RNA sequence: GGGAACGACUCGAGUAGAGUCGAAAAGAAAGGCAGCUAGUGCAGCCCACGCAGAGGCAUGCUUUUGCAUGCCCAGUCGAGCCCACGACUUAGGGCAGCUGCGACACUGAGGGCAGCUGCCGAAAGAGACUGGAUUAGGGUUCGCCCUAAUCCAGUCAAAAGAAACAACAACAACAAC
Reactivity to DMS in 0.01 (KOAc 150mM, MgCl2 10mM, bicine 150mM(pH8.5), 24C), signal-to-noise 2, nucleotides 027 to 126: g010a070a120a170g010g020c010a010g000c000u020a070g030u000g020c000a090g030c020c090c070a150c190g000c060a040g020a140g050g010c000a000u000g010c000u020u000u020u010g010c010a020u000g020c020c000c030a020g030u000c000g000a080g020c000c010c000a300c040g020a030c050u000u000a140g020g000g000c060a140g020c030u020g000c000g010a090c070a120c200u000g000a120g000g000g000c000a050g020c000u000g010c000c020g020a020a080a090g000a120
Reactivity to 2A3 in 0.01 (KOAc 150mM, MgCl2 10mM, bicine 150mM(pH8.5), 24C), signal-to-noise 1, nucleotides 027 to 126: g080a030a070a010g040g000c020a030g030c050u130a030g120u060g120c030a010g000c020c040c020a070c060g010c020a030g050a120g090g000c000a000u010g020c010u200u300u230u300g000c000a000u010g000c000c000c040a020g000u020c000g000a010g000c010c000c000a020c000g030a030c010u010u080a060g090g200g000c000a010g050c000u030g020c000g010a020c000a000c160u170g090a130g010g000g000c000a000g000c010u000g000c000c000g000a010a000a010g040a010